RNA sequence: GGGAACGACUCGAGUAGAGUCGAAAAAGCGUAGCGGUACGCCGCUACGCAAGGCGCAUUUGAACUGUAUUGUACGCCUUGCAUAAAGCAAAAGUACUAAAAAAACGUGCCGUUACGACGGCACGAAUAUUUGUAUCACAUUCGUGUGAUACAAAUAAAAAGAAACAACAACAACAAC
Reactivity to 2A3 in 0.01 (KOAc 150mM, MgCl2 10mM, bicine 150mM(pH8.5), 24C), signal-to-noise 8, nucleotides 027 to 126: a000g010c010g000u000a000g000c010g000g010u030a030c240g050c030c000g000c000u000a000c000g000c000a000a000g000g000c010g000c030a080u070u100u280g150a190a110c090u090g050u200a120u180u110g020u030a020c010g000c010c000u000u020g000c020a070u150a260a140a040g010c020a020a020a020a010g050u050a050c100u190a020a050a030a020a030a020a050c010g000u000g000c000c000g000u020u030a080c300g010a000c000g030g000c000a000c000g010a010a000
Reactivity to DMS in 0.01 (KOAc 150mM, MgCl2 10mM, bicine 150mM(pH8.5), 24C), signal-to-noise 7, nucleotides 027 to 126: a090g020c000g020u000a000g010c010g010g000u010a080c230g030c010c000g010c000u000a000c010g030c000a040a020g000g010c000g010c040a040u010u020u010g000a140a200c280u010g010u010a070u010u000g000u000a040c010g000c010c000u000u000g010c000a140u020a070a120a170g000c030a040a020a030a040g030u000a040c050u020a000a000a080a060a060a080a140c010g010u000g010c010c000g010u000u010a100c180g020a030c020g000g010c010a000c000g010a020a030
Structure probing data (2A3 and DMS) for a 177-nucleotide construct.
In probing experiments dimethyl sulfate is read out at A N1 and C N3, which are open when not base-paired.
The RNA was probed in 150 mM KOAc, 10 mM MgCl2 and 150 mM bicine (pH 8.5) at 24 C.
Reactivities are given for positions 27 through 126.